[RMDB]
RNA sequence: GGGAACGACUCGAGUAGAGUCGAAAAACGCUCAGGGAAACGGAGCAGCUCAAUAAAAACUUUUGAUAUUAGUUUUUAUGGGUAUUUACACUCUGGUGAGGGGAGCUGAGUACGGAAGCUCCAUUAAUUAAGAGUACGUAUUCGUACGUACUCUUAAAAAAGAAACAACAACAACAAC
Reactivity to 2A3 in 0.01 (KOAc 150mM, MgCl2 10mM, bicine 150mM(pH8.5), 24C), signal-to-noise 6, nucleotides 027 to 126: a000c030g020c010u020c020a040g030g010g080a050a120a070c050g020g010a020g010c020a010g000c010u010c020a190a180u010a010a000a000a000a000c010u080u080u100u200g130a090u180a140u300u120a030g010u010u000u000u000u010a000u010g000g000g000u010a060u020u110u060a040c050a020c010u030c020u050g180g010u100g070a070g030g060g010g000a000g000c010u020g020a020g110u120a050c090g040g070a040a010g000c000u000c010c000a020u070u120a070a090
Reactivity to DMS in 0.01 (KOAc 150mM, MgCl2 10mM, bicine 150mM(pH8.5), 24C), signal-to-noise 9, nucleotides 027 to 126: a070c100g010c010u010c020a050g010g000g010a090a130a110c050g000g000a030g010c140a170g000c010u000c010a050a040u000a000a000a010a010a000c000u000u000u030u030g010a160u050a140u020u010a010g000u000u000u000u000u000a010u010g000g000g010u010a050u020u020u030a110c170a160c010u000c020u000g010g010u000g010a100g000g010g000g000a030g010c010u000g010a170g020u030a050c150g010g020a140a040g000c010u000c000c010a080u010u020a040a130